[RMDB]
Chemical mapping of a 207-nucleotide RNA with 2A3 and DMS. DMS (dimethyl sulfate) methylates the pairing face of unpaired adenines and cytosines. DMS adducts were read by reverse transcription with MarathonRT. 2A3 adducts were read by reverse transcription with SuperScript II with manganese.
RNA sequence: GGGAACGACUCGAGUAGAGUCGAAAAACAGCCGCCGCGCACCGCAUCUUCCACGGUGACUAUCUGGCGGUACUGCCCGUCUGCGCACAGCAGGCCGGGGGCCAGAUUGCUGUGGGACAGGUCGAUGUCCACCUUAUCGGCUUUGUUGCGCCCUCGGUAGUUUGAUCUAGUUCGCUAGAUCAAACUAAAAAGAAACAACAACAACAAC
Reactivity to 2A3 in 0.01 (KOAc 150mM, MgCl2 10mM, bicine 150mM(pH8.5), 24C), signal-to-noise 2, nucleotides 027 to 156: a010c040a020g030c020c010g010c020c000g020c010g000c030a010c000c010g060c050a140u070c170u250u080c080c030a020c030g000g000u010g040a130c030u080a140u230c170u230g000g010c010g000g010u050a090c040u050g040c030c000c000g070u000c010u010g000c030g000c010a140c110a110g010c010a000g000g000c000c010g000g000g000g000g020c010c000a010g000a050u030u030g000c000u040g040u080g010g000g040a040c060a090g100g100u230c090g090a130u130g000u060c010c010a060c030c080u170u170a140u230c000g010g000c000u060u000u030g090u000u080g020c090g010c000c000c000u010c000g000g010
Reactivity to DMS in 0.01 (KOAc 150mM, MgCl2 10mM, bicine 150mM(pH8.5), 24C), signal-to-noise 1, nucleotides 027 to 156: a070c040a140g000c000c020g010c020c010g080c150g000c020a090c040c030g020c060a080u000c200u000u000c050c120a070c000g000g010u000g000a110c100u000a110u020c050u000g020g030c010g060g030u000a010c050u000g000c000c030c020g000u000c010u000g000c030g060c130a110c150a240g020c030a030g030g000c010c040g020g010g040g050g070c000c000a140g000a110u000u000g010c020u000g000u000g010g020g000a020c070a050g020g010u000c060g000a090u000g010u010c010c040a120c110c060u010u000a050u010c040g010g030c010u010u000u030g040u000u000g030c050g020c010c010c020u000c030g010g040

The 2A3 profile rests on 1,123 reads.